Source: RMDB library OK2TST, as collected in RNAgym. Structure probing data (DMS and 2A3) for a 177-nucleotide construct. For DMS the reverse transcriptase was MarathonRT. For 2A3 the reverse transcriptase was SuperScript II with manganese. The DMS profile rests on 1,393 reads.
RNA sequence: GGGAACGACUCGAGUAGAGUCGAAAAAGGAAAUUGGAAGAUAUCAGAAAUAAAAUACUUUAGUCCAUGCAUCAUUUAUUUCGAAAAUGUCUUUGCAUGUUUGUCAUACCACGCACACAUAUACGUACUGACUUUUAGGAUUCGUCCUAAAAGUCAGAAAAGAAACAACAACAACAAC
Reactivity to DMS in 0.01 (KOAc 150mM, MgCl2 10mM, bicine 150mM(pH8.5), 24C), signal-to-noise 2, nucleotides 027 to 126: a080g000g010a030a140a090u000u010g010g000a040a030g010a030u000a040u010c060a300g000a060a020a040u010a010a040a040a080u000a100c120u010u000u010a100g020u000c060c020a050u000g020c080a050u020c130a050u000u000u000a010u030u000u000c050g010a060a060a140a070u000g010u000c040u000u000u000g000c070a050u020g010u000u000u000g040u000c080a080u010a090c040c030a040c080g020c040a040c110a060c080a040u020a090u000a070c130g010u000a250
Reactivity to 2A3 in 0.01 (KOAc 150mM, MgCl2 10mM, bicine 150mM(pH8.5), 24C), signal-to-noise 2, nucleotides 027 to 126: a020g170g030a100a060a040u210u170g050g020a010a000g000a060u060a000u110c050a060g080a030a060a020u100a010a040a010a050u230a110c040u050u190u160a090g030u050c000c040a060u060g040c000a040u090c010a030u070u010u090a050u000u080u060c030g060a000a000a040a180u040g020u040c050u030u070u110g070c030a010u050g040u070u070u020g090u040c000a010u020a090c010c020a020c000g060c020a000c000a000c000a040u060a020u050a270c050g040u070a020